[RMDB]
RNA sequence: GGGAACGACUCGAGUAGAGUCGAAAAGGAUGUCCUCCGGCUGCCCAUUGGUGACUCAAUCCAGCCACACUGACUACAAAGCAAGCAGGGCAGUGCUGGGCCCCCAGCAGAGCCACCAUGCAAAGUGCGCAAUACAGUGGUUCGCCACUGUAUUGCGAAAAGAAACAACAACAACAAC
Reactivity to 2A3 in 0.01 (KOAc 150mM, MgCl2 10mM, bicine 150mM(pH8.5), 24C), signal-to-noise 1, nucleotides 027 to 126: g000g050a050u120g050u020c010c050u050c010c030g050g000c060u090g000c040c020c010a050u020u050g000g020u000g030a040c040u010c040a010a080u000c030c010a020g010c030c000a070c010a010c030u020g140a150c000u060a080c110a130a080a060g080c040a060a010g020c010a050g070g020g000c090a030g050u010g040c030u000g010g010g020c000c000c000c010c010a000g040c010a000g020a000g020c000c000a010c000c000a010u050g020c060a140a070a000g070u040g050
Reactivity to DMS in 0.01 (KOAc 150mM, MgCl2 10mM, bicine 150mM(pH8.5), 24C), signal-to-noise 2, nucleotides 027 to 126: g010g030a140u000g040u000c070c020u000c020c070g020g010c070u030g010c040c070c030a110u010u000g000g000u000g020a030c040u000c010a140a100u020c020c030a090g000c020c030a110c010a080c030u000g010a170c040u000a090c110a070a110a160g010c200a060a040g010c060a060g020g010g010c040a030g020u020g000c060u000g020g010g010c080c070c040c000c020a060g000c150a080g000a070g020c020c010a020c020c030a060u000g010c170a030a070a120g000u040g030
Chemical mapping of a 177-nucleotide RNA with 2A3 and DMS. For DMS the reverse transcriptase was MarathonRT. Reactivities are rounded to 0.1 and cut off at 0 and 3.